[RMDB]
RNA sequence: GGGAACGACUCGAGUAGAGUCGAAAAAGUGCGCUGGCAAAAGUGGAAACCGCUUCAGCCGCGCUGAAAAAAGCUGACACACUGACCUCUACCGCCGUAAGUAGCACGAACACAGCAUUCAGUGCUGGGGCAUAUAAAACUUCGGUUUUAUAUGCCCAAAAGAAACAACAACAACAAC
Reactivity to DMS in 0.01 (KOAc 150mM, MgCl2 10mM, bicine 150mM(pH8.5), 24C), signal-to-noise 2, nucleotides 027 to 126: a130g030u000g010c000g000c040u020g060g000c070a100a080a060a080g000u000g000g010a060a150a180c130c010g020c000u010u010c160a230g000c020c050g010c060g060c030u000g000a000a090a070a050a080a040g020c030u000g020a100c100a080c050a090c040u010g020a050c090c000u020c030u000a110c030c030g020c020c050g000u010a060a220g010u000a030g000c030a030c020g010a040a050c060a270c040a070g000c050a090u000u010c130a080g010u000g000c060u000g010